Chemical mapping of a 177-nucleotide RNA with DMS and 2A3. 2A3 adducts were read by reverse transcription with SuperScript II with manganese. The RNA was probed in 150 mM KOAc, 10 mM MgCl2 and 150 mM bicine (pH 8.5) at 24 C.
[RMDB]
RNA sequence: GGGAACGACUCGAGUAGAGUCGAAAAAUGGCACAAUCAAGGCUUACUGCAGCCUCGAACCCCUGGGCUCAAGCAGUCCUCUAGCAGCCUCACGAGUAGCUGGGAUUACUCCACCACACCCAGCUAACACCAUUCUGCUCUUCGGAGCAGAAUGGUGAAAAGAAACAACAACAACAAC
Reactivity to DMS in 0.01 (KOAc 150mM, MgCl2 10mM, bicine 150mM(pH8.5), 24C), signal-to-noise 1, nucleotides 027 to 126: a060u030g000g070c000a070c060a110a150u000c190a090a030g000g010c070u000u010a160c000u030g000c060a030g000c040c070u000c170g000a090a140c210c030c000c000u000g000g000g000c160u000c000a000a080g040c100a000g000u000c000c000u010c040u000a000g040c080a030g000c000c030u000c100a150c000g000a090g000u000a010g000c000u000g030g000g000a060u050u000a010c090u050c130c000a220c000c140a040c300a110c030c000c090a000g000c000u010a050a140
Reactivity to 2A3 in 0.01 (KOAc 150mM, MgCl2 10mM, bicine 150mM(pH8.5), 24C), signal-to-noise 2, nucleotides 027 to 126: a000u120g040g000c020a040c030a050a060u040c030a030a060g070g000c040u050u080a100c040u170g050c040a000g010c000c000u020c000g030a110a120c000c000c000c020u000g030g010g000c000u010c040a050a000g000c030a000g060u040c010c000u080c000u010a000g040c010a020g000c030c010u050c010a100c040g080a030g080u110a000g020c000u010g010g000g000a010u020u150a070c010u000c040c020a030c060c000a040c030a070c040c000c000a000g000c030u000a000a010